[RMDB]
RNA sequence: GGGAACGACUCGAGUAGAGUCGAAAAGCCUCUAGCGUUUGCAAAACGCUGUUUGCGCAAUGAUCUGGAUUUAGCGCAAGUAGGUCCGAAAACCAGAUCAACAUUUCGGACAACCGCGCUAAUUAAAAGAAUGCCGUAUAUUCGUAUACGGCAUUCUAAAAGAAACAACAACAACAAC
Reactivity to DMS in 0.01 (KOAc 150mM, MgCl2 10mM, bicine 150mM(pH8.5), 24C), signal-to-noise 2, nucleotides 027 to 126: g020c010c020u010c110u010a010g000c000g010u010u000u000g000c160a080a070a050a010c020g010c000u000g000u010u020u000g020c120g010c040a110a130u000g020a060u000c030u010g010g010a180u000u000u000a020g010c000g030c000a040a100g020u000a050g020g020u000c000c010g000a040a010a020a060c160c100a110g000a070u040c060a070a080c180a140u000u000u000c000g010g000a000c010a070a050c090c100g020c010g020c020u000a000a040u000u000a060a060a090
Reactivity to 2A3 in 0.01 (KOAc 150mM, MgCl2 10mM, bicine 150mM(pH8.5), 24C), signal-to-noise 1, nucleotides 027 to 126: g080c010c000u020c090u080a010g000c000g000u020u020u110g130c030a100a130a000a000c030g010c040u000g000u040u070u070g110c070g000c000a050a100u110g040a100u070c040u080g090g000a100u000u080u190a040g010c000g000c020a000a010g060u040a070g140g020u030c010c000g000a030a040a040a120c060c020a010g020a100u060c010a020a030c030a010u030u040u030c000g010g000a000c000a020a010c010c030g030c010g050c050u020a050a080u150u070a020a140a000
Description
Chemical mapping of a 177-nucleotide RNA with DMS and 2A3. The data come from the RNA Mapping Database (RMDB), library M2PK90. Values cover nucleotides 27 to 126. DMS adducts were read by reverse transcription with MarathonRT. The reactions ran in a buffer of 150 mM KOAc, 10 mM MgCl2 and 150 mM bicine (pH 8.5), at 24 C. Values are in units of 0.01, from 0 to 300, in steps of 10.